[RMDB]
RNA sequence: GGGAACGACUCGAGUAGAGUCGAAAAUCUCCAUCGGCACGAGGACGUGCCUGGUUUUGAGUGGGGGAGGAUGUUACGGACAAAUUCCGUAACCGUGUGAGGCCAACAUCAAAGAUGCGUACCUAGCUGCGUUUCAACCUGCGUGGGUUGAGGCGGCGAAUUUGCCUUACUUCGGUAAGGCAAAUUCAAAAGAAACAACAACAACAAC
Reactivity to 2A3 in 0.01 (KOAc 150mM, MgCl2 10mM, bicine 150mM(pH8.5), 24C), signal-to-noise 1, nucleotides 027 to 156: u020c020u010c010c010a150u170c040g000g000c010a000c090g110a090g080g270a080c020g000u060g020c090c010u010g000g000u000u000u000u150g070a020g020u040g000g000g000g060g000a010g040g020a100u080g000u000u000a010c000g000g030a040c130a200a300a150u260u030c000c000g000u000a000a000c000c000g010u030g030u030g090a020g000g060c000c030a000a050c010a030u090c140a070a160a060g030a070u090g000c000g030u000a010c010c010u050a010g020c050u080g030c060g000u030u090u020c000a000a010c000c000u050g110c110g170u300g000g000g000u000u020g000a000g000g070c020g010g000c010